Record summary: Structure probing data (2A3 and DMS) for a 177-nucleotide construct. Conditions: 150 mM KOAc, 10 mM MgCl2 and 150 mM bicine (pH 8.5), 24 C.
[RMDB]
RNA sequence: GGGAACGACUCGAGUAGAGUCGAAAAUGCAGGUGAGCGAGCACCAGGUGGGGAGGCCGUGAGGGUGGGUGUCCCAAGCCCAGUGGAGGAUCACAGAGCCACUCAGUGUCGCUGACCACCAGGGAGGCUGUCCCGAAGAAUUCGUUCUUCGGGACAGAAAAGAAACAACAACAACAAC
Reactivity to 2A3 in 0.01 (KOAc 150mM, MgCl2 10mM, bicine 150mM(pH8.5), 24C), signal-to-noise 1, nucleotides 027 to 126: u120g050c030a000g000g100u030g000a080g000c080g050a040g020c000a030c020c020a000g010g010u090g020g090g050g000a160g050g000c050c060g070u050g020a230g010g060g040u190g000g000g000u050g030u010c000c000c020a050a040g010c000c000c000a010g000u030g020g060a110g010g020a040u100c020a030c020a090g030a070g010c020c010a070c030u060c080a080g000u020g020u060c040g000c150u010g040a110c010c040a020c010c000a020g010g030g000a040g020g000
Reactivity to DMS in 0.01 (KOAc 150mM, MgCl2 10mM, bicine 150mM(pH8.5), 24C), signal-to-noise 1, nucleotides 027 to 126: u000g000c070a090g010g020u000g000a010g000c110g020a080g000c020a050c000c060a170g030g030u000g010g050g000g020a150g020g000c150c120g030u000g010a110g000g000g060u020g050g000g100u020g000u000c040c000c020a110a200g000c020c010c010a060g060u060g000g000a290g000g000a080u000c040a060c110a020g010a160g000c020c020a090c000u000c070a060g000u010g020u040c000g000c050u000g030a070c040c040a050c120c060a030g010g000g050a020g030g000

The DMS profile rests on 601 reads. It was measured as part of the RMDB library OK2TST. Values cover nucleotides 27 to 126. For 2A3 the reverse transcriptase was SuperScript II with manganese. DMS (dimethyl sulfate) methylates the pairing face of unpaired adenines and cytosines. DMS adducts were read by reverse transcription with MarathonRT.